RNA sequence: GGGAACGACUCGAGUAGAGUCGAAAAGAACCCUACCGCAUGAGCCGACCUUGACAAAAGUGAAGUAGGGGUAAAUUCUCCCGAUUCGGCGCGAAGGAGAAAAGAAAGAAGAAAAGAAAAAGAAAAAGAGUAUUAGGCGAUUCGUCGCCUAAUACUCAAAAGAAACAACAACAACAAC
Reactivity to 2A3 in 0.01 (KOAc 150mM, MgCl2 10mM, bicine 150mM(pH8.5), 24C), signal-to-noise 2, nucleotides 027 to 126: g050a020a020c010c000c000u000a000c000c010g000c090a080u070g030a000g010c000c000g060a030c000c140u080u180g000a030c050a050a180a020a070g040u020g040a060a000g000u000a000g000g000g000g040u000a020a070a000u080u030c000u020c000c000c000g000a040u080u040c000g000g010c110g070c060g000a000a000g050g010a000g000a000a100a000a000g170a110a060a030g120a000a030g050a000a060a080a000g180a220a080a010a010a010g240a000a130a040a030a000
Reactivity to DMS in 0.01 (KOAc 150mM, MgCl2 10mM, bicine 150mM(pH8.5), 24C), signal-to-noise 1, nucleotides 027 to 126: g000a060a100c000c000c020u000a000c000c300g000c000a000u000g020a100g000c000c000g030a020c130c200u010u000g020a110c300a070a050a210a100g000u070g000a050a000g000u000a000g010g000g000g000u000a060a110a260u000u000c000u000c000c000c000g000a110u020u000c000g000g000c070g000c090g050a220a240g000g000a000g000a000a020a010a080g060a040a220a140g010a230a070g000a060a080a090a110g000a050a000a010a110a100g040a080a150a060a100a090
Description:
An RNA of 177 nucleotides, treated with 2A3 and DMS and read out base by base. The DMS profile rests on 1,008 reads. High DMS reactivity at an A or C suggests that its Watson-Crick edge is free. The RNA was probed in 150 mM KOAc, 10 mM MgCl2 and 150 mM bicine (pH 8.5) at 24 C. The data come from the RNA Mapping Database (RMDB), library OK1LIB.